[RMDB]
The data come from the RNA Mapping Database (RMDB), library OK3TST. This 207-nucleotide RNA was probed chemically with 2A3 and DMS. In probing experiments dimethyl sulfate is read out at A N1 and C N3, which are open when not base-paired. The reactions ran in a buffer of 150 mM KOAc, 10 mM MgCl2 and 150 mM bicine (pH 8.5), at 24 C. For DMS the reverse transcriptase was MarathonRT. For 2A3, 14,086 sequencing reads were counted.

RNA sequence: GGGAACGACUCGAGUAGAGUCGAAAAAAGCUGCUUCCUCAUCUGAGAAAUGGGAACAAAUGACAUCUUUGUCAUAAAGUUUUUCAUUUGUGUGAGGACUCAGGGAUGGACAAGACAGAUACAUUUCCUGCCUCCUGGCACCCACAGCCUGGGAACGUACGUAUCAUAUGUUCGCAUAUGAUACGUAAAAAGAAACAACAACAACAAC
Reactivity to 2A3 in 0.01 (KOAc 150mM, MgCl2 10mM, bicine 150mM(pH8.5), 24C), signal-to-noise 9, nucleotides 027 to 156: a000a010g060c030u030g000c010u040u020c000c000u030c020a100u020c050u090g110a050g110a090a060a040u040g020g010g020a000a010c020a020a140a020u020g000a010c010a050u100c150u210u230u170g040u100c030a030u140a050a100a040g020u000u010u010u050u140c000a010u010u030u040g100u020g020u040g050a040g020g030a030c010u010c040a010g020g010g030a040u110g050g020a040c050a120a060g040a030c020a040g040a040u090a110c050a100u010u030u110c010c000u020g040c000c010u020c010c010u010g010g000c020a090c020c030c010a070c050a030g030c010c020u040g010g000g030a050a020c070g050
Reactivity to DMS in 0.01 (KOAc 150mM, MgCl2 10mM, bicine 150mM(pH8.5), 24C), signal-to-noise 5, nucleotides 027 to 156: a060a080g020c020u000g010c030u020u000c000c010u000c020a110u000c090u010g020a160g010a040a040a020u000g020g010g010a080a010c010a070a300a070u000g010a020c080a100u000c150u000u000u000g020u000c060a050u000a040a120a180g010u000u000u000u010u000c010a020u000u000u000g010u000g020u010g010a070g020g000a130c080u000c020a060g020g020g000a090u000g010g000a080c070a060a080g010a190c060a080g010a190u000a090c090a130u000u000u000c030c000u000g010c040c020u000c020c040u000g010g010c020a100c030c020c040a080c070a090g020c020c010u000g000g010g000a050a080c120g010